RNA sequence: GGGAACGACUCGAGUAGAGUCGAAAAGAAGUGGUUCUCGCAGGGAUUCUUACAGUAGGCCUCAUGGUCGCUUUCUUCGGUGGGGUCGGUUACUUCAUCUGGAAGGAUUCCCAUAGCCGCAAAGGCUCGGGUGUGUUUACUUCGGUAAACACACCCGAAAAGAAACAACAACAACAAC
Reactivity to 2A3 in 0.01 (KOAc 150mM, MgCl2 10mM, bicine 150mM(pH8.5), 24C), signal-to-noise 1, nucleotides 027 to 126: g210a140a090g030u000g010g010u060u000c010u000c100g010c280a020g000g000g000a020u010u050c010u000u000a000c020a000g140u240a090g010g010c030c000u000c070a000u010g150g000u010c050g070c080u090u220u040c020u000u020c070g000g070u000g090g000g000g000u000c000g020g000u030u150a020c000u060u140c130a040u000c090u010g030g010a000a000g000g000a050u080u130c060c000c000a000u240a000g000c000c000g000c080a050a240a190g060g000c000u020